[RMDB]
An RNA of 207 nucleotides, treated with DMS and 2A3 and read out base by base. 2A3 adducts were read by reverse transcription with SuperScript II with manganese. For 2A3, 823 sequencing reads were counted. The RNA was probed in 150 mM KOAc, 10 mM MgCl2 and 150 mM bicine (pH 8.5) at 24 C.
RNA sequence: GGGAACGACUCGAGUAGAGUCGAAAACUGAGUAUGUGCUGUUCUAUCAUUUUUGGCAAGGAUUGGUGUUUCAUCAUUUAGACACAUCAGGUACUUACAUUGCAGUGUCAUAUAAUUUAAAUUGGCAUUGUUUAAAAUGAUGAAAAAAUAACAAAGACUGGAUAUCCUAUUUCGAUAGGAUAUCCAGAAAAGAAACAACAACAACAAC
Reactivity to DMS in 0.01 (KOAc 150mM, MgCl2 10mM, bicine 150mM(pH8.5), 24C), signal-to-noise 2, nucleotides 027 to 156: c050u010g020a100g040u000a050u000g020u000g020c020u010g040u000u000c090u000a120u020c030a090u000u010u020u000u010g060g030c050a050a050g000g020a200u010u000g030g000u010g010u000u000u000c070a070u010c060a090u010u020u000a140g010a050c060a050c010a020u000c020a050g020g040u000a110c030u010u000a030c040a090u000u010g030c010a090g070u010g010u000c020a000u000a080u010a090a190u000u000u000a040a100a260u000u000g000g000c000a010u010u000g010u010u010u010a010a050a080a020u000g000a080u000g000a000a010a080a100a120a090u030a080a130c030a080a050a130g000a210
Reactivity to 2A3 in 0.01 (KOAc 150mM, MgCl2 10mM, bicine 150mM(pH8.5), 24C), signal-to-noise 2, nucleotides 027 to 156: c010u030g020a000g070u100a160u220g050u100g060c060u020g040u090u020c010u150a050u020c040a050u040u030u030u030u140g070g000c100a030a020g030g050a050u050u050g050g000u030g050u000u030u020c010a030u000c000a010u120u150u090a030g020a010c000a000c000a100u090c040a050g000g080u090a030c000u010u070a050c020a090u000u130g030c010a000g000u000g000u000c000a000u020a010u000a160a180u010u240u170a080a140a090u030u000g000g000c000a000u000u010g040u110u080u060a020a000a000a020u020g000a000u070g050a040a010a000a060a000a000u300a080a040c090a050a050a300g040a030